[RMDB]
RNA sequence: GGGAACGACUCGAGUAGAGUCGAAAAAGUCCUUUCAAUCCUUUUGCGAGAAUCUCAAAGUCUUUAUUGCCCUUUCUUUCUGCCUUGGGGAGGGUGACCACCACCAGAAACAGGGCGACGUUCUCGUCUAGCUCGCGUUCCACAUCUUUGGGACCCGGAACCGUCUUAGGUUCGCCUAAGACGGUUCAAAAGAAACAACAACAACAAC
Reactivity to 2A3 in 0.01 (KOAc 150mM, MgCl2 10mM, bicine 150mM(pH8.5), 24C), signal-to-noise 1, nucleotides 027 to 156: a000g050u010c020c000u070u090u110c160a110a140u030c000c030u000u270u200u160g020c030g010a010g010a160a150u000c050u050c150a120a080a070g070u000c050u080u260u110a210u060u140g020c000c000c000u020u080u220c030u000u040u080c030u080g100c060c020u080u150g000g010g050g010a050g010g040g020u080g050a010c000c080a030c010c000a040c000c010a020g010a060a030a000c090a050g010g000g090c010g000a000c010g080u120u020c060u000c010g140u040c020u030a040g030c010u000c010g020c030g010u020u000c000c020a080c060a150u100c070u070u060u070g060g010g050a020c000c000c070g030